[RMDB]
RNA sequence: GGGAACGACUCGAGUAGAGUCGAAAAACGCCUUAGCUGCAUAAUCGCGGAAUCUGCUUUGCACUGCUCCGAGCGGGGCAUGAUUCCGACGCCAAUCGGGGCUUGCUUUUUAGCGGCGUGUAAACGUUAAAAGGGACUUUUUUUACACUAAGGAUUCGUGAGAGUUAAGGUUCGCCUUAACUCUCACAAAAGAAACAACAACAACAAC
Reactivity to 2A3 in 0.01 (KOAc 150mM, MgCl2 10mM, bicine 150mM(pH8.5), 24C), signal-to-noise 1, nucleotides 027 to 156: a000c040g030c000c000u140u100a110g060c070u210g010c060a090u110a220a100u300c150g000c040g020g010a010a000u060c000u020g000c060u040u040u000g010c010a010c060u020g000c000u000c000c040g020a010g000c020g000g000g010g040c010a020u180g000a010u000u000c000c040g060a020c020g000c000c090a020a010u030c000g000g000g000g030c040u010u300g060c040u040u000u030u020u020a020g000c070g110g020c150g040u000g000u000a050a090a000c000g000u030u030a000a010a000a050g000g000g010a010c000u160u000u000u160u020u000u000a020c000a000c000u000a020a140g190g020a210u130u130c090